The record gives the reactivity of an RNA of 177 nucleotides to 2A3 and DMS.
The DMS profile rests on 4,992 reads.
It was measured as part of the RMDB library M2PK50.
2A3 adducts were read by reverse transcription with SuperScript II with manganese.

RNA sequence: GGGAACGACUCGAGUAGAGUCGAAAAUUGUCAUGUUUCGACAUGACAAACAUAAGAUCUAGACAUAAACGGCCAAAAAGUCUAGAUCAAAUAAAGGCCGAAGACUAGGUUAGUUCGCUAACCUAAAAAGUUACUAAUAGUUCGCUAUUAGUAACUUAAAAGAAACAACAACAACAAC
Reactivity to 2A3 in 0.01 (KOAc 150mM, MgCl2 10mM, bicine 150mM(pH8.5), 24C), signal-to-noise 3, nucleotides 027 to 126: u040u000g000u010c000a000u000g020u010u090u080c150g070a000c000a010u000g000a000c000a000a040a000c020a030u210a090a050g010a010u020c000u000a000g030a000c000a010u160a060a200a040c020g010g000c010c010a040a090a050a110a020g000u000c000u000a010g000a000u000c000a010a000a000u050a020a030a010g000g000c010c000g040a050a020g090a050c100u030a000g010g010u010u000a000g000u030u010c060g010c090u010a010a010c000c000u010a030a030a000
Reactivity to DMS in 0.01 (KOAc 150mM, MgCl2 10mM, bicine 150mM(pH8.5), 24C), signal-to-noise 5, nucleotides 027 to 126: u000u000g020u000c000a000u000g000u010u000u020c200g010a040c000a010u000g000a010c010a010a030a090c170a090u010a110a130g000a010u010c010u000a000g010a010c000a150u010a060a090a120c060g010g000c010c010a060a070a100a110a120g010u000c000u000a000g010a000u000c020a030a050a060u010a050a070a140g010g020c010c010g020a170a100g010a120c210u000a010g000g000u000u000a010g000u000u010c190g000c000u000a000a000c000c000u000a000a020a040